[RMDB]
RNA sequence: GGGAACGACUCGAGUAGAGUCGAAAAUAAUUUGAGGUCCAGUGCCAUAGAAUACAUUUUCUAAGACAUACAAUACUGUGACAGAUGUAAGAAAAUAAUUCCAUGAUAAAAGGACAUCUGACAUAAAAGCCAUUUAGGAUCAUUCCUGUUGCAGCACCAUCAUGGACAUCUUCGGAUGUCCAUGAUGAAAAGAAACAACAACAACAAC
Reactivity to 2A3 in 0.01 (KOAc 150mM, MgCl2 10mM, bicine 150mM(pH8.5), 24C), signal-to-noise 1, nucleotides 027 to 156: u110a030a060u120u000u210g110a080g000g000u000c020c010a020g020u040g140c070c040a030u080a080g050a110a020u060a140c060a140u220u130u000u000c010u000a100a000g040a080c000a030u100a040c010a000a100u100a110c110u080g010u030g050a010c030a000g030a000u000g040u030a130a040g180a110a180a020a030u190a060a070u050u000c020c000a040u200g030a010u300a080a150a010a000g010g000a000c000a010u000c010u000g010a010c000a000u130a080a280a050a000g030c030c000a030u060u060u110a040g030g020a000u030c010a020u080u030c000c000u030g010u050u020g080c120a060g040c020a000c020